[RMDB]
RNA sequence: GGGAACGACUCGAGUAGAGUCGAAAACAGAGCUAAUGAGCCACAUACCUACCCAAGGUGAAAGCUCCUUCUCUCGCAAUGUGUAACUCAUGAUUCUCAUGACCCCUGGUUGGAGCGAUCCGGACUAUAGACUAGAGGGUGUUCGCACCCUCUAGAAGUAUAGUGUGUGGUUCGCCACACACUAUACAAAAGAAACAACAACAACAAC
Reactivity to 2A3 in 0.01 (KOAc 150mM, MgCl2 10mM, bicine 150mM(pH8.5), 24C), signal-to-noise 3, nucleotides 027 to 156: c030a000g030a000g010c050u140a110a080u110g010a020g060c050c000a020c020a100u190a040c000c020u060a100c040c020c040a070a000g030g020u050g050a080a070a000g010c000u040c020c010u080u070c100u010c030u020c070g070c130a090a110u050g080u030g020u100a080a050c020u000c030a040u040g070a130u240u040c080u030c060a050u150g070a060c000c000c000c020u020g030g050u040u000g000g000a000g010c010g020a020u010c000c010g010g020a020c050u060a070u100a230g080a060c000u000a010g000a000g010g000g010u020g000u020u020c040g030c040a010c020c000c020u020c000u020a000g000a030a000
Reactivity to DMS in 0.01 (KOAc 150mM, MgCl2 10mM, bicine 150mM(pH8.5), 24C), signal-to-noise 2, nucleotides 027 to 156: c040a130g010a040g050c060u000a200a090u000g010a130g020c020c020a070c090a120u020a060c040c010u000a110c080c070c030a140a080g000g030u000g000a060a090a120g000c060u000c040c020u010u000c040u000c040u000c040g000c070a160a070u010g010u000g010u000a040a070c030u000c050a050u000g010a150u000u000c080u000c020a120u010g000a150c030c040c010c020u030g000g050u000u000g010g030a150g040c010g000a110u010c050c020g000g040a100c060u000a100u000a100g010a240c000u000a040g000a050g000g030g030u010g000u000u010c300g050c000a060c010c000c000u000c020u000a000g020a000a140